[RMDB]
RNA sequence: GGGAACGACUCGAGUAGAGUCGAAAAGAUAUGGACUGACCCGUGGAAUGGAGAAGCGAUAAGUCUGCACUCGGAAACGAGUGUAGACUUUUGACGCUUUGACAUUCCACGGGUCAGUCCUAAGUCAGAAGGGUAGUAAGUUCGCUUACUACCCUUCAAAAGAAACAACAACAACAAC
Reactivity to DMS in 0.01 (KOAc 150mM, MgCl2 10mM, bicine 150mM(pH8.5), 24C), signal-to-noise 2, nucleotides 027 to 126: g010a060u000a300u020g020g020a000c000u000g010a020c000c000c000g050u000g000g010a020a000u000g000g000a300g010a010a020g050c000g000a110u000a030a020g000u010c030u000g010c000a020c010u000c000g030g000a160a140a100c010g050a050g030u010g000u000a010g010a000c000u000u000u010u000g000a300c090g060c010u000u000u000g000a300c010a020u000u010c000c010a000c030g000g000g020u000c000a020g000u000c000c000u040a000a020g000u010c040a150
Source: RMDB library TTRINS, as collected in RNAgym.
Structure probing data (DMS) for a 177-nucleotide construct.
DMS adducts were read by reverse transcription with MarathonRT.
Reactivities are given for positions 27 through 126.